[RMDB]
RNA sequence: GGGAACGACUCGAGUAGAGUCGAAAAGAAAUUACGUUUCCUUUACACUUCUCAAACCGGGAUCAAGAGAAGCAAAGCAUCCCUUAUAUCCACGAUGGAGGGUGUCGUGGAGUAUACUGUACCAAAAAGAGCGAACACGGCUUCGGCCGUGUUCGAAGUUAACGCGAACGUUCGCGUUCGCGUUAACAAAAGAAACAACAACAACAAC
Reactivity to 2A3 in 0.01 (KOAc 150mM, MgCl2 10mM, bicine 150mM(pH8.5), 24C), signal-to-noise 1, nucleotides 027 to 156: g060a040a050a020u240u210a000c090g000u020u000u000c000c020u000u090u150a040c030a000c010u010u050c010u000c040a160a070a060c040c050g000g000g070a060u080c090a300a040g020a020g110a040a030g110c090a050a090a000g000c010a010u010c010c000c010u000u100a110u010a050u080c010c000a000c030g000a000u020g020g180a020g040g010g000u070g000u000c020g000u000g000g000a000g020u000a010u030a020c140u060g070u110a160c030c070a130a060a010a040a000g130a000g100c000g000a000a000c000a000c020g010g060c000u000u020c260g050g040c000c000g000u000g000u000u000c010g010a000a000